[RMDB]
RNA sequence: GGGAACGACUCGAGUAGAGUCGAAAAGAUAUGGAAUGUAGGCUUCGAUAAGCUCCCAUUCGGAAACGAAUGGAGAGCUUUUGACGAAGCUACAUUCCUAAGUCAAAGGGUAUGUUCGCAUACCCAACAAGACACGUAUCUUCGGAUACGUGUCUUGAAAAGAAACAACAACAACAAC
Reactivity to 2A3 in 0.01 (KOAc 150mM, MgCl2 10mM, bicine 150mM(pH8.5), 24C), signal-to-noise 2, nucleotides 027 to 126: g000a010u060a050u110g020g020a000a020u000g000u010a020g300g230c010u020u020c020g130a150u100a300a000g000c000u000c000c020c010a010u000u000c000g000g040a130a020a030c010g000a010a020u000g040g020a100g020a000g020c020u020u000u010u050g120a040c020g000a000a000g000c000u000a000c000a000u000u000c010c000u000a010a020g030u010c110a110a100a080g040g000g010u020a000u040g040u050u130c300g000c160a010u000a010c000c010c000a000a010
Reactivity to DMS in 0.01 (KOAc 150mM, MgCl2 10mM, bicine 150mM(pH8.5), 24C), signal-to-noise 3, nucleotides 027 to 126: g000a020u010a300u000g020g010a020a000u000g020u000a010g030g010c000u000u000c000g040a180u000a030a030g020c000u000c020c000c000a030u000u000c010g020g000a070a070a090c000g010a010a000u000g000g000a120g000a000g010c000u000u000u000u010g020a220c120g000a000a010g010c010u000a020c000a010u000u000c000c000u020a000a070g000u000c030a120a160a170g020g030g000u000a000u000g000u000u010c300g010c020a010u000a000c000c000c010a090a070